[RMDB]
RNA sequence: GGGAACGACUCGAGUAGAGUCGAAAACGGGCUGGUUUAUCCUGCUGCGCCAUUUCACCGAUCCCUUUGUCAUGGCGCCACUGAUGGUCGUCACCGUCAAUGCCGCAAUGGCCAUGCCCUUCGCGGAGACGCUAAUUAUCUUCGGAUAAUUAGCGUCAAAAGAAACAACAACAACAAC
Reactivity to DMS in 0.01 (KOAc 150mM, MgCl2 10mM, bicine 150mM(pH8.5), 24C), signal-to-noise 4, nucleotides 027 to 126: c130g010g010g020c020u000g000g010u000u000u010a080u020c130c100u010g010c050u010g010c020g010c010c030a030u000u000u000c030a060c200c100g000a160u000c040c020c020u000u000u000g010u010c050a020u000g010g000c010g020c050c050a020c050u000g010a030u000g010g020u000c300g000u000c120a170c010c010g020u000c020a010a050u000g010c200c050g000c010a070a060u010g000g000c010c070a040u010g020c010c000c020u000u000c070g010c060g000g000a300
Reactivity to 2A3 in 0.01 (KOAc 150mM, MgCl2 10mM, bicine 150mM(pH8.5), 24C), signal-to-noise 3, nucleotides 027 to 126: c060g000g000g000c020u030g020g090u050u090u160a110u120c030c050u050g040c020u060g000c000g020c000c000a030u030u030u020c030a030c030c030g060a150u080c020c000c000u050u070u060g010u000c000a000u010g000g000c000g010c000c010a020c020u050g000a030u020g030g040u030c120g110u110c140a000c030c000g000u020c020a020a070u060g010c030c030g000c040a030a070u050g010g010c020c010a090u230g000c010c010c030u040u050c090g000c050g070g030a090
An RNA of 177 nucleotides, treated with DMS and 2A3 and read out base by base.
Conditions: 150 mM KOAc, 10 mM MgCl2 and 150 mM bicine (pH 8.5), 24 C.
For 2A3 the reverse transcriptase was SuperScript II with manganese.
For 2A3, 5,468 sequencing reads were counted.